[RMDB]
The record gives the reactivity of an RNA of 207 nucleotides to 2A3.

RNA sequence: GGGAACGACUCGAGUAGAGUCGAAAAUACCGCAGGCCUGCGGUGCGGCAGUGUGGAGACCUGCCGUAAGCCGUGUUGUUUUGACAACCGGGAGAAAGCGGAUGCGGAGGCAGCGCUUUCAGGGUCUAAAAGUAUGGGAUCUUCGGAUCCCAUACAACGUAAAGUCAUCCUUCGGGAUGACUUUACGAAAAGAAACAACAACAACAAC
Reactivity to 2A3 in 0.01 (KOAc 150mM, MgCl2 10mM, bicine 150mM(pH8.5), 24C), signal-to-noise 1, nucleotides 027 to 156: u090a000c000c000g000c000a000g010g020c010c020u030g000c020g000g000u000g000c000g000g000c000a010g010u050g010u080g300g090a050g020a150c020c000u000g020c000c000g000u010a000a020g010c000c000g070u070g000u120u010g010u000u220u090u300g140a020c000a000a000c040c000g030g000g010a000g000a000a000a000g010c000g020g060a150u010g000c020g000g150a110g160g150c000a000g050c000g040c000u000u000u000c000a000g000g010g010u000c010u060a040a090a020a010g000u000a010u000g000g000g010a010u000c030u060u040c170g070g000a000u000c010c010c000a000u000a000c010a010a000
Conditions: 150 mM KOAc, 10 mM MgCl2 and 150 mM bicine (pH 8.5), 24 C.